[RMDB]
Structure probing data (2A3) for a 207-nucleotide construct. The reactions ran in a buffer of 150 mM KOAc, 10 mM MgCl2 and 150 mM bicine (pH 8.5), at 24 C. Reactivities are given for positions 27 through 156. Source: RMDB library OK3TST, as collected in RNAgym.
RNA sequence: GGGAACGACUCGAGUAGAGUCGAAAAAUUUUCCACUGAAGCCUUUGCAGAAGGUACUUAGAGCAAAGCCUCAAGAGACUCUCACGCUCAUUUUGGAGCUGUCUGAUAUUCAUGGCUCCGAGCUGGGCAAAUAUUAGCUGGAAGAUGUAGACGGUGAUAGUAGUCAGCUAUUCGUAGCUGACUACUAAAAAGAAACAACAACAACAAC
Reactivity to 2A3 in 0.01 (KOAc 150mM, MgCl2 10mM, bicine 150mM(pH8.5), 24C), signal-to-noise 1, nucleotides 027 to 156: a000u030u050u020u010c010c020a000c040u060g100a090a030g030c000c010u000u070u210g000c030a030g020a090a020g090g020u060a060c010u030u130a040g000a000g030c070a140a140a000g050c040c000u070c050a120a060g080a020g030a160c020u090c000u020c130a020c060g000c000u000c000a020u040u040u070u160g020g000a000g010c010u010g050u090c080u090g140a140u070a110u290u160c050a060u060g020g010c010u020c000c010g000a000g000c000u000g000g010g000c000a000a070a000u260a090u180u160a010g010c060u010g030g040a000a050g050a030u090g010u100a030g030a020c100g050g030u040g010a010